Structure probing data (DMS and 2A3) for a 207-nucleotide construct. The DMS profile rests on 1,725 reads. High 2A3 reactivity points to a flexible backbone, as in loops and unpaired stretches. The RNA was probed in 150 mM KOAc, 10 mM MgCl2 and 150 mM bicine (pH 8.5) at 24 C.
RNA sequence: GGGAACGACUCGAGUAGAGUCGAAAACCUUGUUUCGACAAGGGGAGUCGCGUACUACUAUUGAACUUGGAUUUAUGCUCCCCACCGGACUCCCAAAUAGGAGUCCGAGGCAUUGUCAGUUUGAAAUAGUAUCGCAUCCAUGCCGUUUCGACGGCAAGAUUCGUGUUUGUUUCGACAAACACGAAUCAAAAGAAACAACAACAACAAC
Reactivity to DMS in 0.01 (KOAc 150mM, MgCl2 10mM, bicine 150mM(pH8.5), 24C), signal-to-noise 1, nucleotides 027 to 156: c020c000u020u010g010u000u000u000c070g020a150c060a040a050g040g010g000g010a220g000u020c070g050c040g110u000a000c030u000a000c060u000a170u000u010g030a020a020c000u000u020g050g020a120u000u020u000a020u000g000c010u000c270c070c070c040a300c200c010g000g010a010c010u000c010c010c010a100a200a260u000a030g020g020a020g040u000c000c000g000a100g040g030c020a080u000u010g000u000c000a050g030u000u000u000g000a000a020a020u000a060g030u000a020u000c070g120c020a170u000c020c010a080u000g000c000c000g020u000u000u020c270g000a070c020g000g020c010a010a120
Reactivity to 2A3 in 0.01 (KOAc 150mM, MgCl2 10mM, bicine 150mM(pH8.5), 24C), signal-to-noise 4, nucleotides 027 to 156: c000c000u010u000g000u000u040u020c080g050a080c110a130a130g010g070g010g010a030g150u300c200g030c010g000u070a050c070u010a000c010u020a050u070u040g020a000a010c040u070u150g160g030a080u250u300u080a020u130g010c000u050c010c090c000c000a020c010c000g010g000a000c000u000c000c010c020a140a300a020u270a080g000g000a010g000u000c000c000g000a000g000g000c000a010u030u010g000u010c010a010g010u010u040u080g180a120a120a050u030a010g010u020a060u290c050g000c020a010u020c020c000a050u080g000c010c000g020u080u080u170c230g080a020c000g010g000c000a000a010
Description: 2A3 adducts were read by reverse transcription with SuperScript II with manganese.